The record gives the reactivity of an RNA of 207 nucleotides to 2A3. As a SHAPE reagent, 2A3 marks flexible, mostly unpaired nucleotides at the ribose 2'-OH.
RNA sequence: GGGAACGACUCGAGUAGAGUCGAAAACUGACGUCCGUACGUAUUCCGGAAAACGGAACGGCGCCUCGGAUGACCUUAUGGUCGCCGUCAUUAUGGCCAUCUACCUCGCGGCCCAGGCCGGACCUCCGCACACAUUCGCUCCUAUCACACGCGUCUCCGUAGCAUGCACUUUCGAGUGCAUGCUACGAAAAGAAACAACAACAACAAC
Reactivity to 2A3 in 0.01 (KOAc 150mM, MgCl2 10mM, bicine 150mM(pH8.5), 24C), signal-to-noise 2, nucleotides 027 to 156: c060u050g030a040c040g010u050c030c040g070u120a060c000g000u050a140u120u080c030c010g000g100a140a120a170a070c020g000g000a020a010c020g050g000c000g020c010c020u000c050g060g050a120u070g080a060c000c010u170u180a120u300g030g000u050c020g010c020c000g000u090c110a060u000u300a080u130g030g000c030c010a020u060c030u040a100c010c060u110c020g070c020g030g030c000c010c010a050g020g090c010c030g030g000a000c000c000u040c010c020g070c030a010c000a010c010a130u010u070c050g040c070u030c000c010u080a080u120c020a030c000a020c160g050c040g040u000c010u000c000